Chemical mapping of a 177-nucleotide RNA with DMS and 2A3. Conditions: 150 mM KOAc, 10 mM MgCl2 and 150 mM bicine (pH 8.5), 24 C.

[RMDB]
RNA sequence: GGGAACGACUCGAGUAGAGUCGAAAAGCACGUCCCAGACCUUUUCCAGUCUGGCAGCUACACCGUUAGAAACCUUGCGUUUGGUGAUUAUGGGCAUAACAUUGGCAAUGCCCUUUUCUCAUGCUUGGUUCUACGAGUACUUCGGUACUCGUAGAACAAAAGAAACAACAACAACAAC
Reactivity to DMS in 0.01 (KOAc 150mM, MgCl2 10mM, bicine 150mM(pH8.5), 24C), signal-to-noise 2, nucleotides 027 to 126: g030c110a110c220g030u040c210c030c000a020g010a000c010c010u010u000u020u000c030c130a260g030u000c000u000g000g040c100a120g040c010u030a090c070a230c000c040g060u010u020a050g000a060a050a050c010c000u000u000g000c020g000u020u040u000g010g000u040g000a060u000u000a010u030g000g000g010c000a020u000a120a090c050a300u050u000g010g020c180a100a070u000g000c020c000c000u000u000u000u000c000u000c020a040u000g000c020u000u000g020
Reactivity to 2A3 in 0.01 (KOAc 150mM, MgCl2 10mM, bicine 150mM(pH8.5), 24C), signal-to-noise 4, nucleotides 027 to 126: g020c010a020c100g120u100c000c010c000a010g010a010c000c010u060u130u100u090c050c010a010g010u000c010u000g010g040c040a000g000c010u010a020c050a040c090c010g070u070u090a050g070a090a050a030c000c000u040u060g040c020g110u020u060u100g090g010u020g010a020u020u070a100u170g000g000g000c010a020u060a070a080c070a250u110u250g110g000c120a000a020u020g000c000c000c000u000u000u010u000c000u000c010a010u050g020c000u010u040g030
Values cover nucleotides 27 to 126.